Conditions: 150 mM KOAc, 10 mM MgCl2 and 150 mM bicine (pH 8.5), 24 C. Chemical mapping of a 177-nucleotide RNA with DMS and 2A3. Values cover nucleotides 27 to 126. For DMS, 6,346 sequencing reads were counted. It was measured as part of the RMDB library M2PK50. The 2A3 profile rests on 10,763 reads.

RNA sequence: GGGAACGACUCGAGUAGAGUCGAAAAGCCGAGAAGUUCGCUUCUCGGCGAAGGGCUGUUUUUCUCGCUGACUUUCAGCCCCAAACAAAAAAUCUCAGCAAAAUCCGGAACGGUUCGCCGUUCCGAACUCACUACGAUUAUUCGUAAUCGUAGUGAGAAAAGAAACAACAACAACAAC
Reactivity to DMS in 0.01 (KOAc 150mM, MgCl2 10mM, bicine 150mM(pH8.5), 24C), signal-to-noise 4, nucleotides 027 to 126: g020c000c000g000a010g000a020a000g010u010u010c220g010c000u000u000c000u000c000g010g010c000g000a030a040g000g000g010c000u000g000u000u000u000u000u000c040u010c160g000c000u000g000a010c090u000u000u000c000a000g000c010c000c000c180a000a010a260c020a000a010a010a000a000a010u000c030u000c000a010g020c000a090a080a110a110u010c130c000g000g000a000a000c000g010g000u000u000c220g010c010c000g020u000u000c000c000g010a010a050
Reactivity to 2A3 in 0.01 (KOAc 150mM, MgCl2 10mM, bicine 150mM(pH8.5), 24C), signal-to-noise 4, nucleotides 027 to 126: g000c000c000g000a020g000a010a010g010u100u280c210g010c120u000u000c000u000c010g010g000c000g000a020a010g000g000g000c000u010g020u020u000u000u020u020c120u050c100g000c010u000g010a020c010u000u010u010c000a010g000c000c000c010c070a030a040a020c020a020a010a000a000a010a020u040c040u000c060a000g000c000a020a070a010a050u080c070c010g000g000a000a000c000g030g020u030u050c250g020c050c000g000u000u000c000c000g000a000a000